[RMDB]
RNA sequence: GGGAACGACUCGAGUAGAGUCGAAAAUAAAAGUCGAAAGUAUUGCUAUAGUUAAGGUUGCGCUUGCCUAUUUAGGCAUACUUCUCAGGAUGGCGCGUUGCAGUCCAACAAGAUCCAGGGACGGUACAAAACAGGCUCGUGUUCGCACGAGCCUGAACAUAUGAGCUCAGUUCGCUGAGCUCAUAUGAAAAGAAACAACAACAACAAC
Reactivity to DMS in 0.01 (KOAc 150mM, MgCl2 10mM, bicine 150mM(pH8.5), 24C), signal-to-noise 2, nucleotides 027 to 156: u000a050a070a100a120g020u000c030g000a070a040a060g010u000a050u000u000g010c010u000a040u030a120g010u000u000a060a060g020g010u010u000g040c080g020c060u000u000g040c050c000u000a170u010u000u010a040g030g040c030a070u010a020c020u000u010c080u010c010a110g000g000a080u010g000g010c150g010c090g030u000u060g000c060a110g020u000c040c030a070a090c050a070a230g000a140u000c030c010a060g020g020g040a050c050g020g060u000a180c060a020a050a090a130c010a010g030g030c000u000c000g050u000g000u020u000c270g030c040a000c000g020a020g010c010c000u000g010a010a040
Reactivity to 2A3 in 0.01 (KOAc 150mM, MgCl2 10mM, bicine 150mM(pH8.5), 24C), signal-to-noise 2, nucleotides 027 to 156: u130a010a090a020a000g110u090c060g050a090a070a020g040u040a060u110u240g000c050u080a070u110a160g050u130u150a150a000g030g020u040u090g020c030g000c030u030u140g000c010c000u050a110u080u190u150a040g040g010c000a000u000a030c000u050u030c020u010c080a060g080g000a090u060g040g020c020g010c030g070u040u000g020c040a040g040u040c040c000a010a020c030a050a170g010a080u020c030c000a020g040g000g010a030c020g000g030u080a090c080a010a040a080a020c000a010g010g010c030u000c000g000u000g040u060u060c230g030c100a000c010g000a000g000c000c000u000g000a000a000